[RMDB]
RNA sequence: GGGAACGACUCGAGUAGAGUCGAAAAGAUGAGAAUACGUGACUUGGUCAGAGGCGGAAAGUCACAAGCACGAACGAUCCAGUAGAGUAUCGACCCGCCAACAGAUGCACGUUGUGAUCGUGCUAGAGCUACCUAAAUGGUUCGCCAUUUAGGUAGCAAAAGAAACAACAACAACAAC
Reactivity to DMS in 0.01 (KOAc 150mM, MgCl2 10mM, bicine 150mM(pH8.5), 24C), signal-to-noise 5, nucleotides 027 to 126: g010a110u020g020a080g020a120a120u040a050c060g010u010g010a030c010u000u000g030g000u030c120a040g000a120g000g000c070g010g020a090a060a030g010u020c040a050c060a110a080g000c030a030c040g010a080a140c110g000a060u010c020c010a110g010u020a060g020a070g020u020a030u000c010g020a150c050c000c020g030c060c050a130a060c130a100g000a070u030g000c010a050c110g010u010u000g020u010g030a050u030c040g010u020g000c020u000a070g010a300
Reactivity to 2A3 in 0.01 (KOAc 150mM, MgCl2 10mM, bicine 150mM(pH8.5), 24C), signal-to-noise 5, nucleotides 027 to 126: g090a080u170g060a010g070a140a060u120a080c050g010u030g040a120c020u000u030g010g030u090c040a030g020a070g160g000c030g020g050a160a020a000g000u010c000a000c020a030a020g020c010a030c070g040a120a010c010g010a030u040c010c030a020g070u120a030g100a030g050u100a080u120c030g010a040c000c030c000g010c010c010a050a030c050a040g130a120u160g030c010a000c040g060u110u150g170u110g130a100u170c020g010u000g030c000u040a030g000a020